[RMDB]
This 207-nucleotide RNA was probed chemically with 2A3.
The 2A3 profile rests on 809 reads.
Source: RMDB library OK3TST, as collected in RNAgym.
RNA sequence: GGGAACGACUCGAGUAGAGUCGAAAAGACGUGGAGGUUGCGCGCCCUCCUUUGCGCGUAAGUACGUCGAAAUUCGGUGCUUGGGAUCGCACCGUUUGAUCCAUUUGAUAUCCGCUUAGUGCCGCGGUUGGGCAUUUACACUUACCCGAAAGGGGAAGCAUAGCAUACGCUUCGGCGUAUGCUAUGCAAAAGAAACAACAACAACAAC
Reactivity to 2A3 in 0.01 (KOAc 150mM, MgCl2 10mM, bicine 150mM(pH8.5), 24C), signal-to-noise 2, nucleotides 027 to 156: g000a000c020g000u020g010g140a070g130g050u060u030g000c000g000c020g000c090c020c050u250c030c100u160u090u120g000c010g000c000g000u020a020a010g190u000a000c000g000u020c030g010a000a060a080u040u020c000g000g000u000g000c020u080u130g130g130g030a080u110c090g000c000a000c020c000g000u040u000u000g010a000u000c000c010a080u050u030u280g150a110u010a070u070c050c000g000c070u060u050a030g020u040g030c020c000g030c030g140g000u120u140g060g030g020c000a010u040u030u080a030c110a030c050u070u150a120c000c000c000g090a020a000a020g000g020g000g010a010a020